The record gives the reactivity of an RNA of 177 nucleotides to DMS and 2A3.
Conditions: 150 mM KOAc, 10 mM MgCl2 and 150 mM bicine (pH 8.5), 24 C.

[RMDB]
RNA sequence: GGGAACGACUCGAGUAGAGUCGAAAACCAGUCCAAGACUCGCAAGGUUGAGGGUUGUUGUGGGAAAGUCGCACGUUUGGGGUCGAACCCUUAACUGCUCGCAAGGCAGGCGGUAGAUAGAACCAUGCUUGGAUAACAUUUUCGAAUGUUAUCCAAGAAAAGAAACAACAACAACAAC
Reactivity to DMS in 0.01 (KOAc 150mM, MgCl2 10mM, bicine 150mM(pH8.5), 24C), signal-to-noise 5, nucleotides 027 to 126: c010c010a160g010u030c010c030a030a300g010a050c030u000c050g030c160a140a270g000g010u020u000g000a300g000g010g020u000u000g010u000u010g000u010g010g000g000a050a120a100g010u000c010g000c080a200c030g020u010u030u020g000g000g010g010u020c260g020a080a300c010c000c000u030u020a030a130c020u000g000c000u000c040g020c240a110a300g000g000c010a020g000g000c030g010g000u030a150g010a060u010a080g010a240a170c020c040a090u000g000
Reactivity to 2A3 in 0.01 (KOAc 150mM, MgCl2 10mM, bicine 150mM(pH8.5), 24C), signal-to-noise 4, nucleotides 027 to 126: c000c000a000g080u020c000c010a100a020g020a020c000u020c040g080c080a010a090g010g020u040u020g020a090g020g010g010u010u010g020u010u050g030u030g060g000g000a040a070a050g030u010c010g020c090a110c060g050u060u110u050g020g010g000g010u080c090g030a130a120c000c000c000u000u000a010a000c010u010g010c020u030c040g090c050a030a030g020g000c000a000g020g000c010g010g030u070a070g030a030u040a040g060a060a010c020c000a040u070g040
2A3 adducts were read by reverse transcription with SuperScript II with manganese.
Values cover nucleotides 27 to 126.